Chemical mapping of a 207-nucleotide RNA with 2A3 and DMS. For DMS the reverse transcriptase was MarathonRT. The reactions ran in a buffer of 150 mM KOAc, 10 mM MgCl2 and 150 mM bicine (pH 8.5), at 24 C.
RNA sequence: GGGAACGACUCGAGUAGAGUCGAAAAUCUAGCAUAGAGAUUGAAUCUUGUGUUUCUCCACAGUGCUUUCAUACACUUUGUAAAAUAGAAACUCACAUUUAUGAGGUACUUAGAUGCCUUUUCUGUGCUGUCUUACUUAGAGAUUCAAUAAUUUGUAGAGUAUAGCUGGAUUCGUCCAGCUAUACUCAAAAGAAACAACAACAACAAC
Reactivity to 2A3 in 0.01 (KOAc 150mM, MgCl2 10mM, bicine 150mM(pH8.5), 24C), signal-to-noise 5, nucleotides 027 to 156: u000c010u020a020g030c000a050u030a070g040a030g020a060u010u040g020a030a020u000c010u040u070g040u010g030u060u040u010c030u000c010c000a040c030a040g000u010g010c010u160u300u210c070a080u150a250c000a010c030u050u080u140g070u140a050a100a070a080u180a070g060a050a030a010c040u050c010a030c010a050u080u130u080a110u200g020a010g000g000u010a000c030u100u080a060g180a300u050g020c010c000u050u040u070u000c020u020g010u010g000c030u020g040u060c050u030u040a070c000u040u060a030g020a020g020a120u060u060c000a030a020u210a120a160u290u150u160g070u190a030
Reactivity to DMS in 0.01 (KOAc 150mM, MgCl2 10mM, bicine 150mM(pH8.5), 24C), signal-to-noise 1, nucleotides 027 to 156: u000c000u000a170g020c030a050u000a050g000a110g010a060u010u000g030a020a210u000c010u000u000g060u000g000u000u000u000c040u000c100c020a020c060a050g060u000g000c010u000u000u000c140a210u000a060c010a030c010u010u020u020g000u000a080a050a070a080u010a080g000a090a040a180c000u000c020a020c050a150u000u000u010a040u000g000a040g030g000u000a040c040u000u000a050g000a110u010g000c000c000u010u000u000u000c040u020g000u000g000c000u000g010u020c040u000u010a130c060u000u000a150g000a050g000a060u020u000c040a010a090u020a060a180u000u000u000g020u000a180